[RMDB]
RNA sequence: GGGAACGACUCGAGUAGAGUCGAAAAACUGCAUCUACGGAUGCUGAACUACGUUCAUCCAAUUUAUUUGGACGCAUGAAAUGAGAAUAGGGAACGGGAUUCUCAUACGCAGGCUACGGCCUGCGAAAAAACUCCUUAUGCUUCGGCAUAAGGAGAACAUAAUCCCACAGUUCGCUGUGGGAUUAUGAAAAGAAACAACAACAACAAC
Reactivity to DMS in 0.01 (KOAc 150mM, MgCl2 10mM, bicine 150mM(pH8.5), 24C), signal-to-noise 2, nucleotides 027 to 156: a100c050u000g020c000a000u000c020u000a110c190g050g020a030u000g070c010u000g010a120a160c010u000a030c000g000u000u010c000a050u000c130c110a120a140u000u020u000a120u040u010u000g000g010a050c000g070c030a060u010g000a060a130a070u020g000a080g000a110a140u000a080g000g000g010a040a050c050g010g060g010a300u000u000c020u010c020a030u000a070c050g030c000a000g010g000c010u000a200c290g040g000c000c000u010g050c000g000a000a030a060a060a040a020c000u000c000c000u010u000a060u000g010c000u000u000c300g100g030c010a020u000a000a010g000g000a000g000a010a040
Reactivity to 2A3 in 0.01 (KOAc 150mM, MgCl2 10mM, bicine 150mM(pH8.5), 24C), signal-to-noise 2, nucleotides 027 to 156: a020c020u030g000c010a000u000c000u030a060c220g130g010a000u010g000c000u010g010a030a050c070u060a030c100g000u000u020c030a010u020c010c010a020a020u070u140u150a150u170u110u030g000g000a000c010g030c040a040u140g110a110a120a040u040g000a000g000a000a010u010a010g020g020g030a010a000c010g020g000g030a020u000u000c000u010c010a000u020a010c010g010c000a000g020g000c000u030a100c280g090g000c010c010u000g000c000g000a020a000a000a000a000a010c000u010c000c000u000u000a000u000g010c000u000u050c170g120g000c000a000u000a000a000g000g000a000g000a000a000

Structure probing data (DMS and 2A3) for a 207-nucleotide construct. The RNA was probed in 150 mM KOAc, 10 mM MgCl2 and 150 mM bicine (pH 8.5) at 24 C. The 2A3 profile rests on 1,543 reads. DMS adducts were read by reverse transcription with MarathonRT. The data come from the RNA Mapping Database (RMDB), library M2RFOK.